[RMDB]
RNA sequence: GGGAACGACUCGAGUAGAGUCGAAAACGGAUUAGGCGUGGAGGUGAAAGUCACCCUCCUCGCAUCGCAAGUUCGUGCUUGCGACUUACACGUAGGGCGAGGGGUGGGCGAAAGUUGCCAUGAGACCAAAAUAUGUAGUUCUUCGGAACUACAUAAACGAGAGUUGUGGAUUCGUCCACAACUCUCGAAAAGAAACAACAACAACAAC
Reactivity to 2A3 in 0.01 (KOAc 150mM, MgCl2 10mM, bicine 150mM(pH8.5), 24C), signal-to-noise 1, nucleotides 027 to 156: c050g020g010a100u110u190a160g090g000c000g000u010g000g000a000g020g010u060g120a300a110a020g080u100c040a100c030c090c000u000c000c000u000c000g070c000a010u030c000g000c000a000a020g020u190u190c060g130u300g060c020u020u030g010c020g000a000c000u030u110a040c040a000c010g030u030a050g000g000g060c180g030a050g030g000g040g020u180g000g000g000c090g040a160a040a000g030u040u040g000c040c020a020u100g040a040g000a060c020c000a000a140a060a060u070a000u000g000u000a010g000u000u040c000u000u030c200g040g010a000a000c000u000a000c000a000u000a000a000a000
Chemical mapping of a 207-nucleotide RNA with 2A3. For 2A3 the reverse transcriptase was SuperScript II with manganese. The RNA was probed in 150 mM KOAc, 10 mM MgCl2 and 150 mM bicine (pH 8.5) at 24 C. The data come from the RNA Mapping Database (RMDB), library M2RFPK.